RNA sequence: GGGAACGACUCGAGUAGAGUCGAAAAGCGUACUACCGACGGGAAAGUUUCGCAACAGCGUAUGGUUUCGGCUAAUCCCAAAUAGGAUUAGCCACAUACGACAUGCGAAAUAACACGUCGGUAUCGCAAAACCAAAUAUUGUUCGCAAUAUUUGGAAGAUUCUGUCAACGUUCGCGUUGACAGAAUCAAAAGAAACAACAACAACAAC
Reactivity to 2A3 in 0.01 (KOAc 150mM, MgCl2 10mM, bicine 150mM(pH8.5), 24C), signal-to-noise 3, nucleotides 027 to 156: g010c010g050u120a100c070u010a000c020c000g010a030c000g000g000g090a060a280a210g050u000u000u000c010g000c040a070a070c040a260g070c000g000u010a010u020g020g160u050u220u300c130g000g000c010u010a000a000u030c040c010c030a070a290a140u300a040g000g000a000u000u000a000g000c010c000a010c000a000u000a000c000g070a060c010a020u020g000c000g000a000a000a000u050a010a000c020a000c000g000u000c000g000g000u010a010u000c000g020c000a050a000a000a050c000c000a000a000a000u000a010u000u010g050u050u060c210g040c100a000a000u000a000u010u000u010g000g030a000a050
This 207-nucleotide RNA was probed chemically with 2A3. The RNA was probed in 150 mM KOAc, 10 mM MgCl2 and 150 mM bicine (pH 8.5) at 24 C. Values cover nucleotides 27 to 156. The 2A3 profile rests on 1,930 reads.